[RMDB]
RNA sequence: GGGAACGACUCGAGUAGAGUCGAAAAACGGGCAGUGGCGAUGGCAACGCGGCAGCCGCAGGGUCGACUUCUUCGCAGCCGCAACAGACGGGGAACGGGCAAAGAGGGGGCCUCGUUCUGUUGGAAGAUCCGAUAUCAUUUUCGAAUGAUAUCGGAUAAAAGAAACAACAACAACAAC
Reactivity to DMS in 0.01 (KOAc 150mM, MgCl2 10mM, bicine 150mM(pH8.5), 24C), signal-to-noise 5, nucleotides 027 to 126: a110c070g000g000g020c020a080g030u000g000g000c040g020a090u010g000g030c050a100a100c130g000c050g000g010c040a130g000c050c040g010c060a050g000g010g020u010c040g000a070c070u000u000c040u000u000c090g020c080a120g010c060c030g020c020a040a030c040a020g010a020c010g010g000g000g010a080a080c120g000g000g000c090a050a080a100g010a110g010g000g000g010g010c010c000u000c010g000u010u010c000u000g000u000u000g000g000a090a060g010
Reactivity to 2A3 in 0.01 (KOAc 150mM, MgCl2 10mM, bicine 150mM(pH8.5), 24C), signal-to-noise 9, nucleotides 027 to 126: a010c040g000g020g010c040a050g020u050g070g020c040g040a090u080g070g020c030a060a040c060g000c020g060g000c030a020g040c020c010g010c030a030g030g010g030u070c030g030a060c020u050u020c000u050u030c060g010c070a040g030c020c020g020c010a000a010c010a010g030a010c000g000g000g010g010a040a090c050g030g060g000c080a110a120a030g080a100g030g020g000g000g000c000c000u020c000g020u120u050c010u010g000u000u010g020g030a060a030g060

Source information: An RNA of 177 nucleotides, treated with DMS and 2A3 and read out base by base. The data come from the RNA Mapping Database (RMDB), library OK1LIB. 2A3 adducts were read by reverse transcription with SuperScript II with manganese. The RNA was probed in 150 mM KOAc, 10 mM MgCl2 and 150 mM bicine (pH 8.5) at 24 C. DMS adducts were read by reverse transcription with MarathonRT.